Record summary: Source: RMDB library OK1LIB, as collected in RNAgym. An RNA of 177 nucleotides, treated with 2A3 and read out base by base. The reactions ran in a buffer of 150 mM KOAc, 10 mM MgCl2 and 150 mM bicine (pH 8.5), at 24 C. For 2A3, 816 sequencing reads were counted. Reactivities are given for positions 27 through 126.
[RMDB]
RNA sequence: GGGAACGACUCGAGUAGAGUCGAAAACUAUCUAUCCAAGGGAUGGAAGGGCAGAGGCCUUUGGUGUCCCCUCCAGUCAAGAAUUGGGGCCUCACAAUCACUAGCCAAUAUGCUUUUCUCUCAUGCCGUCGGACUACAGUUUCGACUGUAGUCCGACAAAAGAAACAACAACAACAAC
Reactivity to 2A3 in 0.01 (KOAc 150mM, MgCl2 10mM, bicine 150mM(pH8.5), 24C), signal-to-noise 2, nucleotides 027 to 126: c030u030a050u070c010u080a030u050c020c020a110a100g160g000g050a000u120g070g040a000a000g050g000g000c000a000g000a050g150g000c000c000u080u010u010g080g000u000g030u150c040c040c010c020u040c020c020a040g060u080c080a080a040g070a200a090u100u040g010g000g010g000c000c020u010c060a090c060a010a070u100c040a000c040u060a000g000c000c000a050a080u010a020u150g030c000u000u020u090u020c040u010c030u030c050a100u150g110c070c020